[RMDB]
RNA sequence: GGGAACGACUCGAGUAGAGUCGAAAACUCAUAUAUUUUUGCUUUUUCUUGCUUAGUUUUGCAAGGAUUGUGUAUUGCUUGAAUUUCAUCCUUGCCACCCACCACUCCCCGGGACUCUGUUCUUGGAUUAACUUCUGAUUUUCACGUCAUAUUUUCAGUGAUAUUUAGCUUUCGAGCUAAAUAUCACAAAAGAAACAACAACAACAAC
Reactivity to 2A3 in 0.01 (KOAc 150mM, MgCl2 10mM, bicine 150mM(pH8.5), 24C), signal-to-noise 1, nucleotides 027 to 156: c020u070c040a040u250a010u060a160u300u070u040u190u190g100c030u030u160u070u060u040c020u000u030g020c020u170u060a080g030u220u220u190u090g000c010a070a020g010g010a060u110u060g020u000g010u030a060u020u200g050c060u040u040g050a120a100u100u100u100c010a000u010c000c010u000u030g010c000c010a020c020c000c000a030c000c000a040c020u010c040c000c000c000g000g030g070a040c050u080c050u140g050u070u050c000u000u010g100g030a060u110u000a050a040c010u040u070c020u020g060a120u100u020u080u100c050a020c010g000u000c030a020u050a050u250u090u100u120c050a020